Overview:
Structure probing data (2A3) for a 177-nucleotide construct. Conditions: 150 mM KOAc, 10 mM MgCl2 and 150 mM bicine (pH 8.5), 24 C. Reactivities are rounded to 0.1 and cut off at 0 and 3. The data come from the RNA Mapping Database (RMDB), library OK1LIB.
RNA sequence: GGGAACGACUCGAGUAGAGUCGAAAACUAUUUAUAGACAGAACAGUGGAAAACGUAUAUCGCUAUAAACCUUAGACCCCGAAUCUUCCAGUCGUACCAUUCCACAUAGGCGAGGCAUAAGCGAAAGCGCCUGACCUGAUUUCGAUCAGGUCAGGCGAAAAGAAACAACAACAACAAC
Reactivity to 2A3 in 0.01 (KOAc 150mM, MgCl2 10mM, bicine 150mM(pH8.5), 24C), signal-to-noise 1, nucleotides 027 to 126: c000u000a010u000u100u000a080u010a000g040a030c070a060g090a140a000c000a030g010u010g010g050a060a060a060a040c000g080u030a130u000a120u300c040g000c010u000a040u160a010a060a140c000c000u000u020a080g060a070c080c000c000c000g000a130a060u020c030u160u000c060c010a020g000u000c040g000u010a050c000c000a000u040u010c070c020a010c000a080u130a080g020g010c090g000a000g000g000c000a040u030a160a020g040c040g160a170a040a000g040